[RMDB]
The record gives the reactivity of an RNA of 177 nucleotides to 2A3 and DMS. Values are in units of 0.01, from 0 to 300, in steps of 10. The DMS profile rests on 2,835 reads.
RNA sequence: GGGAACGACUCGAGUAGAGUCGAAAACAAAUUCAUGCAGGAGUAAUAUGUUGGACAGUCACUUUUACGUAAAUCAUCUGGCAAGUUAACGCACGCUAUUCCUGCGCUGCUUGCCGAACCGGUGGGCUCGUUAAGCCCCAUUCGUGGGGCUUAACGAAAAAGAAACAACAACAACAAC
Reactivity to 2A3 in 0.01 (KOAc 150mM, MgCl2 10mM, bicine 150mM(pH8.5), 24C), signal-to-noise 1, nucleotides 027 to 126: c020a000a020a090u210u060c050a040u080g020c050a000g000g020a020g080u090a040a120u060a100u120g060u040u010g090g080a050c080a040g040u030c000a090c000u020u050u080u060a040c040g030u030a020a030a090u230c090a000u010c040u030g010g020c000a000a090g010u020u130a050a010c050g030c000a040c020g030c040u050a130u220u090c010c010u010g010c000g000c000u020g010c000u000u000g000c000c000g000a020a000c000c000g000g000u000g010g000g020c020
Reactivity to DMS in 0.01 (KOAc 150mM, MgCl2 10mM, bicine 150mM(pH8.5), 24C), signal-to-noise 2, nucleotides 027 to 126: c060a060a150a110u030u020c120a050u000g000c030a030g000g000a050g000u040a020a060u010a080u000g000u010u000g010g000a020c280a090g000u010c070a020c040u000u000u010u000a070c180g010u060a030a060a090u060c090a100u000c100u000g000g000c000a020a020g000u020u020a030a040c080g050c100a040c220g000c130u010a050u010u020c030c020u010g030c000g000c060u020g000c000u000u000g000c000c020g000a030a000c170c030g000g030u000g000g000g000c070

For 2A3 the reverse transcriptase was SuperScript II with manganese. The RNA was probed in 150 mM KOAc, 10 mM MgCl2 and 150 mM bicine (pH 8.5) at 24 C.